This 177-nucleotide RNA was probed chemically with 2A3 and DMS. High 2A3 reactivity points to a flexible backbone, as in loops and unpaired stretches. 2A3 adducts were read by reverse transcription with SuperScript II with manganese.

RNA sequence: GGGAACGACUCGAGUAGAGUCGAAAAUGUAGAGCCUAUUCCAGUGGAAAAUGCUCCAAGGGCACCAUAUGUUGUGGUAUGUGAGUCUGCACCAACAAUAACAGUUCCUGGAAUCACAUGGCAUAUAACCAGUAUCGACUUUCGAGUCGAUACUGGUAAAAGAAACAACAACAACAAC
Reactivity to 2A3 in 0.01 (KOAc 150mM, MgCl2 10mM, bicine 150mM(pH8.5), 24C), signal-to-noise 2, nucleotides 027 to 126: u130g050u050a000g040a030g090c000c080u020a070u000u100c010c030a010g030u170g020g000a000a010a020a150u050g000c020u050c050c060a060a100g010g020g010c020a000c000c020a060u080a110u070g030u050u020g030u060g000g080u120a080u060g020u000g020a050g060u040c030u090g000c000a100c110c040a060a050c040a090a040u180a080a000c020a080g020u000u000c000c000u010g030g000a000a040u050c000a020c000a130u060g020g000c050a040u020a050u040a030
Reactivity to DMS in 0.01 (KOAc 150mM, MgCl2 10mM, bicine 150mM(pH8.5), 24C), signal-to-noise 2, nucleotides 027 to 126: u070g030u040a050g020a120g040c000c010u000a180u000u000c000c000a040g000u000g000g020a070a120a060a020u000g000c040u020c020c030a040a110g010g040g010c010a040c040c010a000u030a070u010g000u010u010g020u000g000g010u000a020u000g000u000g030a010g000u000c070u000g000c140a050c060c160a040a090c090a080a050u020a070a120c200a120g050u000u000c010c000u000g000g010a000a060u000c050a000c040a010u000g000g010c010a030u000a040u000a050
DMS adducts were read by reverse transcription with MarathonRT.